[RMDB]
RNA sequence: GGGAACGACUCGAGUAGAGUCGAAAAUUUGUCCGUGCGGUACCGCCCUCCUUGGUCGGCUCCGCCUACUCGGCGGUCGGCAGUGGAGAGGAAUCAAAAACUAGUCCCAGUUGGCAGUGCGACACACGCGGUAGAUUCUUUUCGAAGAAUCUACCGCAAAAGAAACAACAACAACAAC
Reactivity to 2A3 in 0.01 (KOAc 150mM, MgCl2 10mM, bicine 150mM(pH8.5), 24C), signal-to-noise 3, nucleotides 027 to 126: u120u070u080g030u000c020c020g020u030g030c030g070g050u090a050c020c010g050c020c030c000u020c000c010u040u050g080g000u030c000g000g040c070u030c050c020g020c000c000u080a110c090u060c110g010g010c000g000g000u030c000g000g000c010a050g000u060g050g010a030g010a080g020g050a030a090u110c080a010a040a060a000a000c030u060a030g050u000c010c010c000a000g000u030u020g040g010c060a020g010u010g020c010g000a000c000a000c000a000c120
Reactivity to DMS in 0.01 (KOAc 150mM, MgCl2 10mM, bicine 150mM(pH8.5), 24C), signal-to-noise 1, nucleotides 027 to 126: u000u000u000g020u000c030c050g000u040g000c060g000g000u010a060c030c170g020c060c030c000u030c010c070u030u040g000g070u030c060g010g010c130u060c030c030g020c010c000u000a040c170u070c120g050g000c010g000g010u030c010g000g070c000a050g000u000g000g000a070g000a080g000g000a080a070u030c030a070a090a170a040a100c080u000a140g000u000c010c020c000a060g010u000u030g000g000c000a020g000u010g000c000g000a000c070a090c150a090c120
Chemical mapping of a 177-nucleotide RNA with 2A3 and DMS. The 2A3 profile rests on 2,941 reads. It was measured as part of the RMDB library RFM100. 2A3 adducts were read by reverse transcription with SuperScript II with manganese.